Conditions: 150 mM KOAc, 10 mM MgCl2 and 150 mM bicine (pH 8.5), 24 C. Structure probing data (2A3 and DMS) for a 177-nucleotide construct. For DMS the reverse transcriptase was MarathonRT. For 2A3 the reverse transcriptase was SuperScript II with manganese. The DMS profile rests on 22,588 reads.

RNA sequence: GGGAACGACUCGAGUAGAGUCGAAAAGAAAUCUCCAGUAUUGCGUACGCAGUUAUUCAGUUUUUUUAUUGAUCUCCUAAAACAAGAUUUGUUUCACGGUAGCAUUAGUGGGGGGAAAAUCGAAGCACAUUACAGUGUAAUUCGUUACACUGUAAUGAAAAGAAACAACAACAACAAC
Reactivity to 2A3 in 0.01 (KOAc 150mM, MgCl2 10mM, bicine 150mM(pH8.5), 24C), signal-to-noise 6, nucleotides 027 to 126: g060a000a070a030u040c030u010c020c010a030g100u050a050u030u070g030c070g040u040a030c080g000c100a070g010u040u060a040u060u040c020a020g040u000u010u020u000u020u080u120a150u040u090g070a080u030c080u010c090c060u100a050a060a010a010c040a020a020g040a150u090u080u120g030u000u040u020c040a020c020g030g010u030a010g000c010a010u030u020a050g080u050g000g000g010g000g030g040a030a080a010a010u110c070g030a080a010g090c050a020
Reactivity to DMS in 0.01 (KOAc 150mM, MgCl2 10mM, bicine 150mM(pH8.5), 24C), signal-to-noise 9, nucleotides 027 to 126: g010a080a080a090u010c020u000c020c050a060g010u000a030u000u010g010c020g010u000a080c120g010c050a080g010u000u000a040u010u010c050a070g010u000u000u000u000u000u010u010a080u020u010g000a060u010c070u000c030c040u000a060a040a060a060c160a040a070g000a100u010u010u000g010u000u000u000c070a070c100g010g010u000a070g010c030a030u000u000a030g020u000g010g010g010g010g000g000a050a030a070a060u010c090g010a080a110g020c210a160